Structure probing data (DMS and 2A3) for a 177-nucleotide construct.
RNA sequence: GGGAACGACUCGAGUAGAGUCGAAAAGAUAUGGACCGACGACGAAGUACACGGUUUGCACAUCGGAAACGAUGUGUAAUUUGUGUACAGAGUCGUGUCCUAAGUCAAACGUGGGUUCGCCCACGAAGUAUCACUGGUUCUUCGGAACCAGUGAUACAAAAGAAACAACAACAACAAC
Reactivity to DMS in 0.01 (KOAc 150mM, MgCl2 10mM, bicine 150mM(pH8.5), 24C), signal-to-noise 3, nucleotides 027 to 126: g000a050u000a300u010g000g000a040c000c070g000a000c000g010a040c050g000a300a180g010u010a000c010a010c010g000g000u010u000u000g010c010a010c000a010u010c000g020g000a110a110a150c010g020a020u000g030u000g000u000a000a000u000u000u010g030u000g000u000a000c000a070g030a300g000u000c000g000u000g000u000c000c000u000a030a160g000u000c020a080a040a200c020g040u000g000g010g030u000u020c210g000c010c000c000a000c000g020a030a080
Reactivity to 2A3 in 0.01 (KOAc 150mM, MgCl2 10mM, bicine 150mM(pH8.5), 24C), signal-to-noise 2, nucleotides 027 to 126: g050a010u070a060u170g030g000a020c040c130g130a010c030g010a020c020g020a080a000g000u010a000c010a000c000g060g000u010u000u050g000c010a000c000a010u010c000g000g030a060a090a030c020g000a000u010g000u000g010u010a000a000u010u020u110g000u000g000u000a020c010a000g000a000g000u010c000g000u020g000u000c000c000u020a130a030g080u050c070a120a070a060c040g010u000g040g000g020u060u080c250g200c030c000c000a000c000g010a060a010